An RNA of 177 nucleotides, treated with DMS and 2A3 and read out base by base. The reactions ran in a buffer of 150 mM KOAc, 10 mM MgCl2 and 150 mM bicine (pH 8.5), at 24 C.

[RMDB]
RNA sequence: GGGAACGACUCGAGUAGAGUCGAAAAGUGCAGGCCUGUGUAACCGCUGCGUUCAUUCUUGCGGAGAAGAAGGGGAACGGCUGAGAGAUCCACAGCUUGAAGAGAAAUGCGAUCACGGGAGGGAAGACCCUUCUCUGGAAUUCGUUCCAGAGAAGGGAAAAGAAACAACAACAACAAC
Reactivity to DMS in 0.01 (KOAc 150mM, MgCl2 10mM, bicine 150mM(pH8.5), 24C), signal-to-noise 2, nucleotides 027 to 126: g020u010g000c020a060g010g000c120c060u000g010u000g000u000a100a140c170c060g030c040u000g020c100g020u000u010c110a120u010u010c010u000u000g040c020g000g020a140g000a090a070g000a040a080g000g000g020g020a040a070c050g000g010c010u000g010a190g010a100g000a090u000c040c050a070c040a040g010c090u010u000g000a100a070g010a100g000a040a090a020u010g030c170g000a100u010c080a140c040g000g000g000a040g000g000g000a120a090g010a200
Reactivity to 2A3 in 0.01 (KOAc 150mM, MgCl2 10mM, bicine 150mM(pH8.5), 24C), signal-to-noise 2, nucleotides 027 to 126: g100u080g010c000a020g000g110c040c040u080g000u000g020u060a070a040c020c030g000c070u060g020c030g090u060u060c030a060u050u050c040u100u130g020c040g060g070a020g020a120a010g020a020a030g010g020g000g000a000a020c000g030g000c030u050g030a060g000a030g010a110u000c040c000a060c010a040g030c050u050u110g020a090a040g030a020g040a160a130a070u090g050c060g030a010u050c030a010c050g000g000g030a030g000g010g000a050a030g080a070
As a SHAPE reagent, 2A3 marks flexible, mostly unpaired nucleotides at the ribose 2'-OH.